[RMDB]
RNA sequence: GGGAACGACUCGAGUAGAGUCGAAAAGCACUCUAGUCUGUUACAAUUUCCGCUGUCAGAACACGGGCAUUUUUAACAGCAACGCUACAGCGGGAACCAUGACACUUGGACCUAUCUUCUUCAGUUGCAAAGUUAUUCACUUCGGUGAAUAACUUUGAAAAGAAACAACAACAACAAC
Reactivity to DMS in 0.01 (KOAc 150mM, MgCl2 10mM, bicine 150mM(pH8.5), 24C), signal-to-noise 3, nucleotides 027 to 126: g000c080a060c060u000c030u000a100g010u000c050u000g000u000u010a050c210a140a200u000u000u010c000c020g020c030u010g000u000c160a040g010a090a090c170a120c100g000g000g030c040a020u000u010u030u030u000a050a150c200a100g000c020a070a060c080g000c020u000a020c030a030g010c010g000g000g000a030a020c090c040a130u020g020a050c050a040c060u000u010g010g000a070c040c000u000a060u000c060u000u000c050u000u000c060a090g010u010u010g010
Reactivity to 2A3 in 0.01 (KOAc 150mM, MgCl2 10mM, bicine 150mM(pH8.5), 24C), signal-to-noise 2, nucleotides 027 to 126: g030c020a010c070u050c030u030a040g040u000c080u060g060u050u070a040c060a090a120u010u030u000c010c020g000c000u010g010u010c160a010g010a120a060c080a020c110g060g050g010c010a030u040u050u000u040u210a110a050c100a030g030c040a060a090c020g000c000u000a000c000a010g000c010g000g000g000a000a010c010c000a060u080g000a000c010a000c090u040u070g040g000a000c010c010u020a110u100c070u060u000c010u110u080c070a140g090u150u080g100